[RMDB]
RNA sequence: GGGAACGACUCGAGUAGAGUCGAAAACGUGCUCGCUACUGGUACUACCUGCAACAAUGGCAAUAUGAAGAUUAGUUAGAUUCAUGGUGAUUUUUCUCCUCUAAUGAGAUUGCUAUGGCCUUGGCAACACCCUGCGAGAAUUCGUUCUCGCAGGGUGAAAAGAAACAACAACAACAAC
Reactivity to 2A3 in 0.01 (KOAc 150mM, MgCl2 10mM, bicine 150mM(pH8.5), 24C), signal-to-noise 1, nucleotides 027 to 126: c000g000u040g010c030u030c010g010c000u020a010c060u070g040g000u050a040c000u020a070c000c000u020g030c070a110a050c070a000a190u150g020g000c010a020a080u110a090u140g130a070a120g030a040u080u080a010g060u060u060a010g020a150u050u110c030a000u170g060g080u070g010a090u170u020u000u040u000c080u000c040c000u010c010u070a130a120u120g000a130g000a090u020u000g000c010u010a010u130g040g010c010c000u070u030g000g000c010a030a010
Reactivity to DMS in 0.01 (KOAc 150mM, MgCl2 10mM, bicine 150mM(pH8.5), 24C), signal-to-noise 1, nucleotides 027 to 126: c160g000u010g010c050u010c030g000c020u000a030c030u000g000g060u000a060c060u000a070c080c050u000g000c130a150a090c120a060a060u000g010g000c000a040a060u000a040u000g000a070a120g000a070u000u000a130g010u000u000a040g000a140u000u010c060a060u010g010g000u000g030a060u000u000u000u010u000c020u020c020c120u000c040u040a080a120u020g000a110g010a060u000u010g010c090u020a050u000g010g020c030c030u000u000g010g010c100a020a170
Structure probing data (2A3 and DMS) for a 177-nucleotide construct. The DMS profile rests on 866 reads. The RNA was probed in 150 mM KOAc, 10 mM MgCl2 and 150 mM bicine (pH 8.5) at 24 C. DMS adducts were read by reverse transcription with MarathonRT.